Description:
Conditions: 150 mM KOAc, 10 mM MgCl2 and 150 mM bicine (pH 8.5), 24 C. The record gives the reactivity of an RNA of 177 nucleotides to 2A3 and DMS. Reactivities are given for positions 27 through 126. Reactivities are rounded to 0.1 and cut off at 0 and 3. The 2A3 profile rests on 3,099 reads.
RNA sequence: GGGAACGACUCGAGUAGAGUCGAAAAGAAGACAACUUCGGUUGUCUUCAAGGGGCUGUUUUACUCGCUGACUUUCAGCCCAAAACAAAAGAGUCAGCAAAACGAGACUACCCUUCGGGGUAGUCAAUGCAUUACGAUAGUUCGCUAUCGUAAUGCAAAAAGAAACAACAACAACAAC
Reactivity to 2A3 in 0.01 (KOAc 150mM, MgCl2 10mM, bicine 150mM(pH8.5), 24C), signal-to-noise 1, nucleotides 027 to 126: g010a000a000g000a000c000a000a000c000u040u100c170g090g020u000u000g000u000c000u000u000c010a000a010g000g000g000g000c000u010g010u000u010u020u050a110c090u110c120g000c000u010g010a010c000u020u030u030c000a000g000c010c000c000a070a020a000a000c010a000a010a000a000g020a000g020u010c020a000g030c000a020a020a010a000c080g010a050g000a100c010u000a000c000c000c010u020u070c200g030g000g010g000u000a000g000u000c000a000a000
Reactivity to DMS in 0.01 (KOAc 150mM, MgCl2 10mM, bicine 150mM(pH8.5), 24C), signal-to-noise 1, nucleotides 027 to 126: g020a000a000g000a020c010a000a010c020u000u000c180g050g000u000u000g000u000c000u000u000c000a070a050g030g000g000g000c010u000g000u000u000u000u010a070c080u030c190g000c000u000g000a010c010u000u000u000c010a020g000c020c000c030a030a070a010a200c130a000a020a030a000g000a000g070u000c000a010g010c000a030a030a060a070c280g010a090g000a020c000u000a010c000c000c000u000u020c200g040g010g020g010u000a000g010u000c000a000a050